[RMDB]
RNA sequence: GGGAACGACUCGAGUAGAGUCGAAAAGUGUUAACGGACUCUUCUUCUCUGUCUGUCCCCGCCCUGCUCUCCGCAGAGCUUCAAGCCUUCUUCUGUUUUCCAGUCAGAGCUGGCAGGGGGAAAAAAAACGUGCCAUUUCUUUCGAGAAAUGGCACGUAAAAGAAACAACAACAACAAC
Reactivity to 2A3 in 0.01 (KOAc 150mM, MgCl2 10mM, bicine 150mM(pH8.5), 24C), signal-to-noise 1, nucleotides 027 to 126: g080u100g080u300u120a160a020c100g050g010a000c000u000c000u080u000c000u100u020c060u010c070u030g020u020c020u090g020u040c030c000c000c000g040c000c000c000u000g020c000u000c010u080c020c010g050c180a010g000a020g000c000u090u230c100a080a040g020c010c000u010u040c020u090u000c010u020g180u050u140u050u080c020c010a010g000u080c000a010g020a060g030c000u000g000g000c020a040g000g000g000g020g060a070a000a000a000a000a000a000